An RNA of 177 nucleotides, treated with 2A3 and read out base by base. 2A3 adducts were read by reverse transcription with SuperScript II with manganese. Values cover nucleotides 27 to 126. The reactions ran in a buffer of 150 mM KOAc, 10 mM MgCl2 and 150 mM bicine (pH 8.5), at 24 C. Reactivities are rounded to 0.1 and cut off at 0 and 3.
RNA sequence: GGGAACGACUCGAGUAGAGUCGAAAAGCAACAUUAUUUUUACAAUCAGGUUCUAUCGUGAAGCGAUUCAAUAUUCCAAAACAAGCAUCUGCUAAAGACGCUUAUGGCUGGAUUGUCAUGGGACGUGACUCACCACCCCGUUCGCGGGGUGGUGAGUAAAAGAAACAACAACAACAAC
Reactivity to 2A3 in 0.01 (KOAc 150mM, MgCl2 10mM, bicine 150mM(pH8.5), 24C), signal-to-noise 1, nucleotides 027 to 126: g030c000a000a190c050a020u300u070a290u030u300u000u000u000a000c000a040a030u120c000a120g070g000u080u000c000u050a100u020c050g060u050g120a000a000g090c030g000a000u080u060c000a060a090u050a290u240u300c020c070a050a080a030a050c000a000a000g060c000a070u100c000u000g000c030u300a300a240a000g150a050c000g000c000u120u000a150u000g040g000c000u000g020g000a250u120u030g170u030c000a000u000g030g010g030a000c130g000u000g300